Chemical mapping of a 177-nucleotide RNA with 2A3. It was measured as part of the RMDB library RFM100. Reactivities are given for positions 27 through 126. Conditions: 150 mM KOAc, 10 mM MgCl2 and 150 mM bicine (pH 8.5), 24 C.
RNA sequence: GGGAACGACUCGAGUAGAGUCGAAAAGGAAACUGCCGGUAAUACCUCAUGAUCUCUCCGGAGCAAAGCCUCGGCGCCUCGGGAUCGGCGAUCUUCCUAUCAGGUCGUUGGCGGGGUAAUGGCCCACCUGGUGUGCACUCUUCGGAGUGCACACCAGAAAAGAAACAACAACAACAAC
Reactivity to 2A3 in 0.01 (KOAc 150mM, MgCl2 10mM, bicine 150mM(pH8.5), 24C), signal-to-noise 1, nucleotides 027 to 126: g040g000a000a130a000c010u060g010c030c040g000g030u010a090a000u100a200c000c010u070c010a100u140g070a200u010c040u040c000u000c050c010g100g010a020g000c160a050a040a000g030c000c050u010c020g040g050c060g020c000c000u010c000g120g000g000a150u030c030g000g000c000g060a010u000c000u070u070c000c020u170a230u250c050a000g000g050u010c060g000u000u100g020g000c020g000g000g020g000u010a090a120u120g050g000c020c000c000a120c000